[RMDB]
RNA sequence: GGGAACGACUCGAGUAGAGUCGAAAAGAUAUGGACAUCAUGGAGUCGUCUUCGGAAACGAAGAUACGACUAUGAAGUGAGUCCUAAGUCAAACUCAGAACUGAGGGUUCGCCCUCAGUUCUGAGAACACUAUACUCUGGUUCGCCAGAGUAUAGUGAAAAGAAACAACAACAACAAC
Reactivity to 2A3 in 0.01 (KOAc 150mM, MgCl2 10mM, bicine 150mM(pH8.5), 24C), signal-to-noise 6, nucleotides 027 to 126: g010a000u010a010u060g000g000a000c040a300u000c000a000u020g010g010a010g000u000c010g010u000c000u000u000c010g000g010a030a010a000c010g000a010a000g020a030u230a090c000g000a000c010u110a300u110g000a010a000g010u000g000a000g000u000c000c000u000a010a000g010u000c020a060a000a160c010u010c000a000g000a010a000c000u000g010a010g020g040g030u090u130c300g210c000c000c000u000c010a000g000u000u000c000u000g010a000g000a000a000
Reactivity to DMS in 0.01 (KOAc 150mM, MgCl2 10mM, bicine 150mM(pH8.5), 24C), signal-to-noise 6, nucleotides 027 to 126: g010a020u000a040u010g010g000a020c000a150u000c010a000u000g000g000a000g020u000c000g010u010c000u000u000c000g020g000a020a020a030c000g010a010a000g000a230u010a020c010g020a010c000u000a210u010g010a110a190g000u000g000a070g000u000c000c000u000a010a090g000u000c010a110a090a250c000u000c000a000g000a020a010c000u000g000a020g010g000g020u000u000c290g000c010c000c000u000c000a000g010u010u000c000u000g000a000g000a040a140
This 177-nucleotide RNA was probed chemically with 2A3 and DMS. DMS adducts were read by reverse transcription with MarathonRT. The 2A3 profile rests on 20,585 reads. For 2A3 the reverse transcriptase was SuperScript II with manganese.